[RMDB]
RNA sequence: GGGAACGACUCGAGUAGAGUCGAAAAGAUAUGGAUGUGUCCAACAGUGCUUGGAUUUAUGCUCGGAAACGAGCAUUGUCAGCACGAUUGGAGCACAUCCUAAGUCAAAACCUACCUUCGGGUAGGAGUAAGCCAUAUCCUUCGGGAUAUGGCUUACAAAAGAAACAACAACAACAAC
Reactivity to DMS in 0.01 (KOAc 150mM, MgCl2 10mM, bicine 150mM(pH8.5), 24C), signal-to-noise 2, nucleotides 027 to 126: g010a030u000a300u000g030g010a000u000g040u020g010u000c010c000a000a010c300a250g010u000g010c000u010u020g020g000a040u010u010u010a010u000g000c000u000c000g020g000a080a080a190c000g000a010g000c000a000u000u010g020u000c010a030g020c020a010c000g000a300u010u010g000g020a070g020c010a030c000a000u000c010c000u000a020a060g000u000c040a140a090a220a110c010c000u000a020c000c000u000u010c290g000g000g030u000a000g000g010a020
Reactivity to 2A3 in 0.01 (KOAc 150mM, MgCl2 10mM, bicine 150mM(pH8.5), 24C), signal-to-noise 2, nucleotides 027 to 126: g010a010u090a080u120g030g010a000u020g010u000g010u030c000c000a030a020c000a020g010u010g030c020u140u300g260g010a000u290u300u080a020u030g010c000u000c010g010g000a030a120a080c030g010a000g010c010a000u000u000g010u010c010a000g030c020a000c030g040a080u010u020g000g010a150g140c000a000c010a000u000c000c010u000a070a020g000u010c010a020a010a140a250c010c000u000a010c000c010u040u120c300g120g010g000u000a000g000g010a040
This 177-nucleotide RNA was probed chemically with DMS and 2A3. For 2A3, 2,709 sequencing reads were counted. DMS adducts were read by reverse transcription with MarathonRT. The DMS profile rests on 1,278 reads.